Chemical mapping of a 207-nucleotide RNA with 2A3 and DMS. For 2A3 the reverse transcriptase was SuperScript II with manganese. Reactivities are given for positions 27 through 156. The DMS profile rests on 1,761 reads. DMS adducts were read by reverse transcription with MarathonRT.

RNA sequence: GGGAACGACUCGAGUAGAGUCGAAAAUGAGACAAACACGCUUCACAAUGUGCGGCAAAGAAACAUUGUUUAUGCAAAGGCACUUCGCAAUGUGUGCUCAAACAUUGCUUAUUCAAACACUCUUCACAAAAGAAUCAGUGGUUCGCCACUGAUUCAACUGACAGAUUACGUUCGCGUAAUCUGUCAGAAAAGAAACAACAACAACAAC
Reactivity to 2A3 in 0.01 (KOAc 150mM, MgCl2 10mM, bicine 150mM(pH8.5), 24C), signal-to-noise 7, nucleotides 027 to 156: u150g020a030g040a050c080a030a140a010c080a010c050g000c000u010u020c010a000c000a000a010u030g010u010g010c010g040g060c080a080a110a070g060a010a060a000c010a000u010u010g100u040u100u120a130u140g060c050a040a050a070g180g000c000a000c010u020u020c030g000c010a010a010u010g010u000g020u020g030c090u100c140a040a040a010c000a000u000u020g000c000u060u170a190u170u140c100a030a100a050c040a050c070u080c020u150u190c100a050c050a160a070a020a040g000a000a000u000c000a000g000u000g030g010u030u040c160g040c030c000a000c000u000g010a000u000u010c000a000a000
Reactivity to DMS in 0.01 (KOAc 150mM, MgCl2 10mM, bicine 150mM(pH8.5), 24C), signal-to-noise 1, nucleotides 027 to 156: u010g020a150g020a120c090a100a110a100c110a060c080g000c000u000u000c040a070c000a030a000u010g090u000g040c000g040g000c020a210a200a050g040a110a030a000c020a010u050u010g030u000u000u000a060u000g030c070a020a220a170g000g000c030a010c040u000u000c040g000c040a210a090u010g040u000g040u000g010c000u010c060a100a190a060c010a080u010u000g010c040u000u020a030u000u020c000a040a090a080c020a070c040u000c020u000u010c010a160c140a100a020a100a130g010a030a000u010c000a000g020u000g010g000u000u000c300g020c060c000a000c000u000g030a000u010u020c000a050a150